[RMDB]
RNA sequence: GGGAACGACUCGAGUAGAGUCGAAAAAGCACAUCGGGCGAAAGUCCCCGGGCGACGGGGCAGAGAGUGCCAGCCCGCAAGGGCAGGACCCCCGCGCGUCGUUUUUACGACCGCGGGGCAGCUCGCCCUCCUGGGAUGAAUUCGUUCAUCCCAGGAGAAAAGAAACAACAACAACAAC
Reactivity to DMS in 0.01 (KOAc 150mM, MgCl2 10mM, bicine 150mM(pH8.5), 24C), signal-to-noise 1, nucleotides 027 to 126: a240g060c070a030c070a070u050c060g020g000g010c020g010a070a100a180g000u040c000c000c000c050g030g010g020c130g010a160c060g030g030g030g010c040a130g030a100g000a090g020u010g010c020c000a060g010c000c000c000g020c260a090a070g010g000g020c010a010g000g010a130c170c020c000c000c010g000c000g000c220g050u000c010g030u000u040u020u000u090a010c000g050a030c020c000g000c000g000g000g010g020c050a010g000c090u000c000g000c010c010

Chemical mapping of a 177-nucleotide RNA with DMS. For DMS the reverse transcriptase was MarathonRT.